An RNA of 177 nucleotides, treated with 2A3 and DMS and read out base by base. The 2A3 profile rests on 3,462 reads. The DMS profile rests on 2,261 reads. DMS adducts were read by reverse transcription with MarathonRT.
RNA sequence: GGGAACGACUCGAGUAGAGUCGAAAAUCGCUAAGCUUCGGCUUAGCGAAAAGUCGCGGCUAGAGGGCGUGUACGGCUGCGCACACACACGACCCUCAAGCCAAAGCAUCGUGUUCGCACGAUGCAAUCGUUAGGACAACUUCGGUUGUCCUAACGAAAAAGAAACAACAACAACAAC
Reactivity to 2A3 in 0.01 (KOAc 150mM, MgCl2 10mM, bicine 150mM(pH8.5), 24C), signal-to-noise 3, nucleotides 027 to 126: u010c000g000c000u000a000a000g000c000u040u150c240g070g000c000u010u020a000g000c010g010a000a000a000a000g010u010c040g000c100g020g000c020u060a050g000a000g030g000g000c020g000u010g000u020a030c070g070g000c050u170g060c100g040c020a050c010a020c000a000c000a010c080g300a300c010c000c000u010c010a000a000g000c010c000a050a030a010g000c000a000u000c010g000u010g040u040u050c200g020c070a000c000g000a000u000g020c010a010a090
Reactivity to DMS in 0.01 (KOAc 150mM, MgCl2 10mM, bicine 150mM(pH8.5), 24C), signal-to-noise 2, nucleotides 027 to 126: u000c000g030c000u000a000a000g000c010u000u010c200g030g010c000u000u010a000g000c000g000a000a020a020a050g010u000c140g010c260g000g050c010u000a050g010a020g000g000g000c010g000u000g010u010a090c120g020g010c030u030g000c150g020c080a060c050a090c120a000c030a000c010g000a160c000c000c000u000c010a060a050g000c020c000a040a040a090g000c000a000u010c010g020u010g000u000u000c160g020c000a000c000g010a010u000g020c000a040a030